[RMDB]
RNA sequence: GGGAACGACUCGAGUAGAGUCGAAAAUCCGCCGGCUGCGCGGCAAGCUGGACGACCCCUACGACGCCAAGCUGCUGCAUACCGUGCGCGGCAUGGGCUACGUGCUGGAAUCGCGCCCGUCAUGAAAUCGGGCGCUACUCUUCGGAGUAGCGCCCGAAAAAGAAACAACAACAACAAC
Reactivity to DMS in 0.01 (KOAc 150mM, MgCl2 10mM, bicine 150mM(pH8.5), 24C), signal-to-noise 1, nucleotides 027 to 126: u010c010c000g010c090c110g000g010c090u030g050c040g030c100g030g050c060a070a150g020c010u000g000g010a160c010g010a150c100c040c050c020u000a130c080g000a090c160g010c000c020a000a160g000c000u010g000c010u000g000c030a130u010a080c080c080g030u000g010c010g050c000g050g030c090a050u000g000g000g010c030u000a050c060g010u000g000c020u010g000g010a010a070u000c080g000c200g000c050c010c020g000u000c070a050u020g000a130a110a130

An RNA of 177 nucleotides, treated with DMS and read out base by base. The DMS profile rests on 701 reads. The RNA was probed in 150 mM KOAc, 10 mM MgCl2 and 150 mM bicine (pH 8.5) at 24 C.